[RMDB]
RNA sequence: GGGAACGACUCGAGUAGAGUCGAAAACUCCGGGCCUCUCCUGCCUGCCUGAAAAGCUCAAUAAAGGAGUUGGCUGAUAUCUGAGCUUGCCUGGUUAUUAUCGGGAUUCGUUACUAAUUCCGUGCAACCUACCGUGGGCUUUCGAGCCCACGGUAGGAAAAGAAACAACAACAACAAC
Reactivity to 2A3 in 0.01 (KOAc 150mM, MgCl2 10mM, bicine 150mM(pH8.5), 24C), signal-to-noise 1, nucleotides 027 to 126: c050u050c000c040g050g010g060c040c000u010c060u070c000c010u000g040c000c020u120g000c000c000u000g020a000a040a040a000g000c000u060c050a110a120u210a300a100a020g020g000a060g050u090u040g010g020c000u000g060a040u000a030u160c100u080g000a000g000c010u050u000g000c000c000u000g260g060u130u030a180u040u140a120u110c000g000g050g000a090u000u000c060g090u010u070a070c020u090a040a000u000u090c000c000g020u140g020c010a000a000
This 177-nucleotide RNA was probed chemically with 2A3. Reactivities are rounded to 0.1 and cut off at 0 and 3. The 2A3 profile rests on 417 reads. It was measured as part of the RMDB library OK1LIB.